[RMDB]
RNA sequence: GGGAACGACUCGAGUAGAGUCGAAAAAACAAGAUAGAGGAGCCCCCAUGACGCUGGAACCGUCCCGGAAGUGGGAGAAAGGGAGGCGAAGAUAGAAGGGGAGACCCCGAUCAGAAUGCCGAUCGGGACAGGAUGCGCUUCGGCGCAUCCAAAAGAAACAACAACAACAAC
Reactivity to DMS in 0.01 (KOAc 150mM, MgCl2 10mM, bicine 150mM(pH8.5), 24C), signal-to-noise 2, nucleotides 027 to 129: a030a020c110a040a040g000a110u110a000g000a030g050g030a020g000c000c000c000c000c000a150u110g010a050c000g030c040u000g050g000a070a130c090c030g030u000c050c040c060g140g020a020a050g040u040g000g000g050a100g060a020a050a100g000g000g080a020g030g000c080g040a030a060g010a130u020a000g010a240a050g000g020g020g010a050g000a160c150c000c000c010g000a030u000c030a110g030a220a070u060g040c000c120g000a030u000c040g000g020g000a120c170a030
Reactivity to 2A3 in 0.01 (KOAc 150mM, MgCl2 10mM, bicine 150mM(pH8.5), 24C), signal-to-noise 2, nucleotides 027 to 129: a000a000c110a020a000g020a090u210a020g070a020g000g050a040g000c000c000c000c080c020a040u100g070a010c050g000c010u030g040g030a040a140c000c000g130u000c000c000c000g060g030a080a030g060u100g060g000g070a010g090a100a000a000g070g030g000a000g000g000c020g000a100a000g010a000u240a000g080a020a050g090g000g000g000a030g000a010c000c020c000c000g030a000u000c010a000g210a300a020u180g070c020c050g010a000u000c000g010g040g010a000c030a000